[RMDB]
RNA sequence: GGGAACGACUCGAGUAGAGUCGAAAAUGGGCGGCUGCCGGCCCCACCACACGACGCGUCAGGCCAUACCUGGCACCAUGCGGACGCGAUACUGUUCUCGCUCACGAAGAAUGGAUUGGUACCAGGCGUCUCUGCGCCGAGCAAUUAUGUCAGCGACUACUAACGGAUCUUUCGAGAUCCGUUAGUAAAAAGAAACAACAACAACAAC
Reactivity to DMS in 0.01 (KOAc 150mM, MgCl2 10mM, bicine 150mM(pH8.5), 24C), signal-to-noise 1, nucleotides 027 to 156: u000g010g050g000c040g000g000c020u000g060c160c040g040g080c070c020c060c010a120c030c010a110c050a140c000g010a070c040g000c050g000u000c010a020g000g000c000c230a230u000a300c020c010u000g020g010c000a120c010c010a080u000g000c030g010g000a110c070g010c040g020a050u000a040c100u000g020u020u000c050u000c020g000c050u000c110a100c050g040a150a150g010a100a100u000g000g010a120u000u020g010g010u000a050c030c020a100g040g000c000g010u010c050u000c100u010g040c000g000c000c000g000a140g010c040a060a090u020u000a040u010g010u010c050a010g040c020g050a120c150
Reactivity to 2A3 in 0.01 (KOAc 150mM, MgCl2 10mM, bicine 150mM(pH8.5), 24C), signal-to-noise 2, nucleotides 027 to 156: u050g000g040g000c050g020g000c000u010g010c060c010g020g010c000c030c000c000a050c010c000a030c000a000c130g060a020c040g020c030g020u090c080a030g020g000c090c020a100u210a060c010c050u020g040g020c040a050c000c060a050u120g020c000g020g030a000c060g000c000g000a000u070a070c110u100g120u200u010c000u020c020g020c010u110c040a170c080g110a080a070g040a130a040u100g020g050a070u030u110g010g000u000a030c000c000a040g000g000c020g090u020c030u000c020u100g000c000g000c020c010g010a020g020c010a000a100u130u130a080u250g030u050c030a010g020c010g150a040c040